[RMDB]
An RNA of 207 nucleotides, treated with DMS and 2A3 and read out base by base.
For DMS, 1,732 sequencing reads were counted.
The RNA was probed in 150 mM KOAc, 10 mM MgCl2 and 150 mM bicine (pH 8.5) at 24 C.
The data come from the RNA Mapping Database (RMDB), library OK3TST.
RNA sequence: GGGAACGACUCGAGUAGAGUCGAAAAUAGAAAUGCUUCUGUAGUUAUUGGAACAACCAAGUUUUAUGGCGGUUGGGACAACAUGUUGAGAAACCUGAUUCAGGGUGUUGAAGACCCAAUUCUUAUGGGUUGGGAUUAUCCUAAGUGUGAUAGAGCAGAGAAUAGUCUCUUUCGAGAGACUAUUCUCAAAAGAAACAACAACAACAAC
Reactivity to DMS in 0.01 (KOAc 150mM, MgCl2 10mM, bicine 150mM(pH8.5), 24C), signal-to-noise 1, nucleotides 027 to 156: u020a100g010a100a030a080u000g000c050u000u020c060u010g020u000a200g010u000u000a030u010u000g000g030a090a130c070a070a090c040c030a060a150g010u000u010u010u000a060u000g000g000c080g020g010u000u010g010g020g010a170c010a050a000c010a040u000g040u010u000g000a180g020a090a060a130c010c010u010g020a110u000u020c080a040g000g000g030u020g010u010u000g000a050a180g010a150c000c000c000a000a050u000u000c020u000u000a130u010g040g010g000u000u000g000g010g030a120u000u000a080u000c000c020u000a050a130g000u000g030u030g000a120u000a030g000a150g020c040a140
Reactivity to 2A3 in 0.01 (KOAc 150mM, MgCl2 10mM, bicine 150mM(pH8.5), 24C), signal-to-noise 1, nucleotides 027 to 156: u150a000g080a010a080a010u080g020c020u020u070c010u070g140u060a060g030u060u150a130u080u100g070g040a140a050c030a030a020c040c010a000a110g010u080u030u090u040a030u110g080g050c010g000g000u000u000g020g000g040a010c000a110a000c020a030u190g120u200u100g040a050g020a120a020a000c000c010u040g020a220u060u110c060a020g070g000g040u000g010u040u050g020a060a040g140a120c000c000c000a010a000u000u020c040u030u250a130u300g050g000g000u010u000g030g000g000a060u150u110a030u090c000c010u010a150a020g080u080g010u000g040a010u060a110g070a000g050c160a030